[RMDB]
RNA sequence: GGGAACGACUCGAGUAGAGUCGAAAAAAAAGGAAAGUUCCUGUUUUUUUAUGAAACAUUGUGAAAGAAUGAAAGUUUUUUCACAUACUCUCUUAAAACCCAUGUUUUCAAUGAGGAAUUUGUGGUACCAUACUGGCUUUUUCGAAAGCCAGUAUGGAAAAGAAACAACAACAACAAC
Reactivity to 2A3 in 0.01 (KOAc 150mM, MgCl2 10mM, bicine 150mM(pH8.5), 24C), signal-to-noise 1, nucleotides 027 to 126: a000a000a000a020g280g000a160a300a140g060u070u050c000c010u010g050u050u000u000u000u000u000u000a180u250g000a000a070a000c010a070u000u060g000u000g040a010a010a010g110a010a010u070g060a020a060a090g000u010u010u000u000u000u000c020a040c040a000u040a080c000u010c070u010c060u160u240a010a010a010a010c000c040c000a010u080g160u000u110u170u060c170a150a060u180g140a130g060g060a110a050u030u060u090g180u240g000g000u070a010
Reactivity to DMS in 0.01 (KOAc 150mM, MgCl2 10mM, bicine 150mM(pH8.5), 24C), signal-to-noise 2, nucleotides 027 to 126: a010a000a010a010g030g000a030a090a140g000u000u010c020c000u000g000u000u000u010u010u010u070u020a090u040g000a080a060a030c040a110u040u010g010u000g000a000a000a020g000a000a000u000g010a120a110a120g010u000u000u000u000u020u000c000a010c000a010u010a110c120u000c050u020c030u010u010a070a050a050a060c030c020c000a060u010g000u000u000u000u010c030a100a080u010g010a110g000g010a030a060u020u020u010g030u000g010g000u030a140